RNA sequence: GGGAACGACUCGAGUAGAGUCGAAAAAUUUCCUCGGGAGGAUCCCCCAAGCUUCCAACAGGCAAGCAACAAGAUAGAGGAGCCCCCAUGACGCUGGAACCGUCCCGGAAGUGGGAGAAAGGGAGGCAAGGAAUAGACUUCGGUCUAUUCAAAAGAAACAACAACAACAAC
Reactivity to 2A3 in 0.01 (KOAc 150mM, MgCl2 10mM, bicine 150mM(pH8.5), 24C), signal-to-noise 7, nucleotides 027 to 129: a000u050u040u030c010c000u010c010g010g000g000a040g010g020a050u040c000c010c000c010c010a050a020g020c020u030u000c010c040a110a100c030a130g030g020c040a030a020g040c000a010a090c030a040a050g090a090u190a030g040a050g020g020a010g000c020c000c000c010c010a060u120g020a010c030g000c040u030g000g020a040a040c030c020g040u060c000c030c010g020g010a060a030g070u120g020g030g010a030g010a040a030a010g000g000g000a020g010g010c020a030a020g100
Reactivity to DMS in 0.01 (KOAc 150mM, MgCl2 10mM, bicine 150mM(pH8.5), 24C), signal-to-noise 8, nucleotides 027 to 129: a040u040u000u010c030c010u010c090g010g020g020a060g010g000a100u020c000c010c020c020c010a100a130g000c040u000u000c000c040a170a100c110a140g030g020c160a000a030g030c060a130a100c130a080a050g040a120u050a060g000a020g000g040a060g000c060c000c000c020c050a090u050g020a060c070g030c050u020g010g000a070a060c130c060g000u000c030c060c040g040g000a070a070g030u060g010g010g030a040g030a040a030a050g010g010g010a060g030g000c130a100a040g040